[RMDB]
RNA sequence: GGGAACGACUCGAGUAGAGUCGAAAAGAUAUGGAGACCGCGUGACAUGAAGACUACUUUGUGAACUACGUCGGAAACGACGUAGUUCACAAAGUAGUACUUCAACAGCACGCCGGUCUCCUAAGUCCUCAAUAAAUAUCUUCGGAUAUUUAUUGAGAAAAGAAACAACAACAACAAC
Reactivity to DMS in 0.01 (KOAc 150mM, MgCl2 10mM, bicine 150mM(pH8.5), 24C), signal-to-noise 2, nucleotides 027 to 126: g020a130u010a300u000g010g030a030g010a020c010c010g020c000g010u000g010a090c090a260u000g000a020a010g030a110c000u000a010c010u010u000u000g030u000g000a050a010c000u010a000c000g010u010c010g000g000a090a100a200c000g020a000c000g000u000a000g000u000u000c000a000c000a000a000a000g010u010a000g000u000a020c010u000u000c020a020a070c300a200g000c010a010c010g010c140c060g060g010u010c000u000c000c000u010a010a100g000u000c060